[RMDB]
RNA sequence: GGGAACGACUCGAGUAGAGUCGAAAAGAAAAAGUCGUCGAGUCCGGAGAAUAUGAGACGAAAGUCUCGACGAGUAGUGGAUACGAUCCGGAAAGUAUCGACUACAAGAUAUCGAGACGACGAAAAAGGGUAAAUAUUCCUUCGGGAAUAUUUACCCAAAAGAAACAACAACAACAAC
Reactivity to 2A3 in 0.01 (KOAc 150mM, MgCl2 10mM, bicine 150mM(pH8.5), 24C), signal-to-noise 2, nucleotides 027 to 126: g100a000a290a000a010a000g110u000c010g000u000c000g000a050g060u020c040c030g050g040a100g100a180a040u250a210u200g050a050g000a040c000g080a010a000a000g010u010c000u000c000g020a050c050g000a020g010u030a000g000u010g090g000a000u020a000c040g020a070u090c010c030g010g000a060a000a030g000u000a000u000c040g110a000c000u000a010c000a020a010g060a090u080a060u040c000g000a000g010a050c000g000a000c000g050a060a070a050a000a020
Reactivity to DMS in 0.01 (KOAc 150mM, MgCl2 10mM, bicine 150mM(pH8.5), 24C), signal-to-noise 2, nucleotides 027 to 126: g000a030a100a070a110a090g000u000c000g000u000c000g010a210g000u000c000c030g040g010a060g030a200a160u060a080u090g000a070g000a000c010g000a110a210a120g000u000c000u000c020g000a040c100g010a230g020u000a000g020u010g000g000a010u000a000c020g000a030u010c030c030g030g000a050a030a060g000u000a000u000c000g000a030c000u000a000c000a210a100g030a150u070a060u000c000g030a060g000a000c000g020a150c070g010a030a050a080a150a060